Chemical mapping of a 177-nucleotide RNA with 2A3 and DMS. The reactions ran in a buffer of 150 mM KOAc, 10 mM MgCl2 and 150 mM bicine (pH 8.5), at 24 C. It was measured as part of the RMDB library OK1LIB. The DMS profile rests on 111,211 reads.

RNA sequence: GGGAACGACUCGAGUAGAGUCGAAAACUGCCGAUAGACAGUGUGGAGGCCUGGUUUCGGGUCUAGUCUUUCGUUGAGAUCCGAAGAAGGGUGUACUUCUGACCGAAAGAUCAGAUGUCUGUCGAGAGCGUCUGCGUUGCUUCGGCGGCGUGGGCGCAAAAGAAACAACAACAACAAC
Reactivity to 2A3 in 0.01 (KOAc 150mM, MgCl2 10mM, bicine 150mM(pH8.5), 24C), signal-to-noise 9, nucleotides 027 to 126: c010u020g010c000c000g000a000u000a000g000a000c000a010g040u030g020u030g110g140a030g000g040c000c000u010g000g010u010u010u010c000g000g000g000u000c000u010a030g040u010c000u020u180u080c070g070u030u090g070a010g000a010u000c000c000g000a010a000g020a010a020g010g000g000u040g010u040a020c000u010u000c000u000g010a000c000c000g080a060a030a000g020a040u010c010a000g020a040u010g000u000c000u000g000u000c010g000a020g010a010
Reactivity to DMS in 0.01 (KOAc 150mM, MgCl2 10mM, bicine 150mM(pH8.5), 24C), signal-to-noise 9, nucleotides 027 to 126: c010u000g010c070c000g000a020u000a000g000a010c000a030g020u020g010u010g000g010a090g000g000c000c000u000g000g030u020u010u000c000g000g010g010u000c000u010a060g000u030c130u010u030u030c170g010u020u040g010a050g000a030u010c010c020g000a010a010g000a110a090g000g000g010u000g010u030a100c010u010u010c000u000g000a030c040c000g010a090a070a110g000a110u000c020a020g000a060u010g010u000c000u000g000u010c010g000a110g010a140